Chemical mapping of a 177-nucleotide RNA with DMS and 2A3. For DMS, 984 sequencing reads were counted. The RNA was probed in 150 mM KOAc, 10 mM MgCl2 and 150 mM bicine (pH 8.5) at 24 C. The data come from the RNA Mapping Database (RMDB), library M2PK50. DMS adducts were read by reverse transcription with MarathonRT.
RNA sequence: GGGAACGACUCGAGUAGAGUCGAAAAGUACUUAUCUUCGGAUAAGUACAAAUAACAAGAACCGGACGGGUGAGAACCGAGACAAACAGCCACCAAAAUAAAAAAGAUGUGCGUUCGCGCACAUCAAGUGAACUAGUUAGUUCGCUAACUAGUUCACAAAAGAAACAACAACAACAAC
Reactivity to DMS in 0.01 (KOAc 150mM, MgCl2 10mM, bicine 150mM(pH8.5), 24C), signal-to-noise 2, nucleotides 027 to 126: g020u010a030c000u000u000a000u000c010u000u020c140g020g000a000u000a000a000g000u000a000c000a020a090a110u000a110a090c140a130a120g020a110a160c120c040g010g010a060c080g000g000g040u000g000a080g010a050a060c050c050g000a030g020a050c060a060a060a080c080a060g010c020c010a040c110c070a080a080a120a080u030a000a030a100a140a140a060g000a020u000g000u000g010c010g010u000u010c190g050c000g040c010a010c000a000u000c010a010a060
Reactivity to 2A3 in 0.01 (KOAc 150mM, MgCl2 10mM, bicine 150mM(pH8.5), 24C), signal-to-noise 2, nucleotides 027 to 126: g010u020a000c000u010u000a000u040c010u040u070c200g050g010a010u000a040a010g000u000a010c000a000a000a000u040a010a010c010a000a070g100a050a040c050c030g000g050a030c070g050g000g030u040g000a080g000a070a010c040c030g010a070g040a050c090a010a140a000c020a020g040c000c010a020c020c010a040a150a020a050u220a050a160a030a000a010a010g000a030u000g000u000g020c010g020u030u060c260g010c000g010c070a000c000a000u000c000a000a000